[RMDB]
The record gives the reactivity of an RNA of 177 nucleotides to DMS and 2A3.
Values cover nucleotides 27 to 126.
Source: RMDB library OK2TST, as collected in RNAgym.
RNA sequence: GGGAACGACUCGAGUAGAGUCGAAAAAGAGUCAUAACAGUAAAUCCGAUAUCAACGUCUCAUUAAGCAUGCUGGGUGUGAACGGUGACAUCGAACAUGCUGGUAGAAAGAUGGAAACAAGAGUUGACAAGUGUCUAUGGUUCGCCAUAGACACUUGAAAAGAAACAACAACAACAAC
Reactivity to DMS in 0.01 (KOAc 150mM, MgCl2 10mM, bicine 150mM(pH8.5), 24C), signal-to-noise 5, nucleotides 027 to 126: a050g000a120g010u000c060a070u010a080a110c090a090g010u000a050a100a110u010c040c020g000a080u010a090u000c030a060a080c040g020u000c010u000c050a110u000u000a120a020g010c010a020u000g010c040u000g010g020g010u000g000u000g010a060a080c100g020g020u000g000a030c010a010u000c010g000a020a040c050a050u010g000c010u000g000g010u010a040g020a080a070a050g000a030u000g010g000a090a070a070c130a050a080g000a130g000u000u010g010a180
Reactivity to 2A3 in 0.01 (KOAc 150mM, MgCl2 10mM, bicine 150mM(pH8.5), 24C), signal-to-noise 3, nucleotides 027 to 126: a000g100a010g030u040c030a060u040a210a040c040a020g090u080a020a110a040u010c030c030g050a030u010a010u100c010a010a020c030g060u020c000u010c050a040u060u100a060a000g000c000a040u050g000c010u100g060g030g000u030g000u020g050a080a020c070g090g050u050g050a000c000a010u020c010g020a020a000c000a010u050g000c000u020g020g020u040a030g050a040a070a030g040a020u070g020g120a030a050a000c030a060a040g070a010g100u020u100g030a010
Conditions: 150 mM KOAc, 10 mM MgCl2 and 150 mM bicine (pH 8.5), 24 C.
The 2A3 profile rests on 3,031 reads.